[RMDB]
RNA sequence: GGGAACGACUCGAGUAGAGUCGAAAACUGGCAAACUUCCAAAUACUCCGCCGUCGGGCUAUUUCGGGAUUCUUGAGGACUCAGUAAUCCAACGUAUCAUGGAUCUCAUCAAUUCGAUCACGUACACGGGUUUUCAUUCCUUCGGGAAUGAAAACCCAAAAGAAACAACAACAACAAC
Reactivity to 2A3 in 0.01 (KOAc 150mM, MgCl2 10mM, bicine 150mM(pH8.5), 24C), signal-to-noise 1, nucleotides 027 to 126: c030u010g020g080c000a000a000a300c020u070u080c000c030a190a000a000u050a040c020u030c040c030g100c050c010g040u050c060g000g000g000c000u020a020u020u120u110c100g000g010g040a040u030u010c020u070u050g070a030g000g030a030c000u000c070a000g050u130a060a050u070c000c000a010a010c040g100u010a000u060c050a010u190g080g000a080u030c030u000c030a200u120c030a030a090u050u160c080g020a030u040c000a000c040g000u120a000c100a000c090